[RMDB]
This 207-nucleotide RNA was probed chemically with 2A3.
The RNA was probed in 150 mM KOAc, 10 mM MgCl2 and 150 mM bicine (pH 8.5) at 24 C.
RNA sequence: GGGAACGACUCGAGUAGAGUCGAAAAGGGCCGUUCAAUGGAUCCGAAGCCUCUAGAAGGAUAAUAUAGGCACUCCAUACCCUACUCCGACUCAAUACGUCCCCGUCGUACAGAAUGGUAACAUAUCGAACACAACCUAACUUCGGUUAGGUUGUAAGUGUAGCUGCUGAUUCGUCAGCAGCUACACAAAAGAAACAACAACAACAAC
Reactivity to 2A3 in 0.01 (KOAc 150mM, MgCl2 10mM, bicine 150mM(pH8.5), 24C), signal-to-noise 1, nucleotides 027 to 156: g090g000g010c230c080g100u130u150c050a080a070u030g000g000a040u230c000c000g040a080a030g010c030c010u080c020u090a260g060a300a000g150g010a050u070a190a140u230a140u050a140g000g000c020a000c110u030c010c000a000u010a060c000c000c000u000a000c080u090c060c000g010a040c000u000c020a000a170u040a140c020g030u040c020c030c000c040g020u030c020g010u000a140c040a020g130a000a180u060g030g030u080a070a020c020a160u210a190u200c060g060a020a060c020a000c000a050a010c000c000u020a000a000c000u110u090c040g040g010u000u000a010g010g020u000u000g000u000a000a000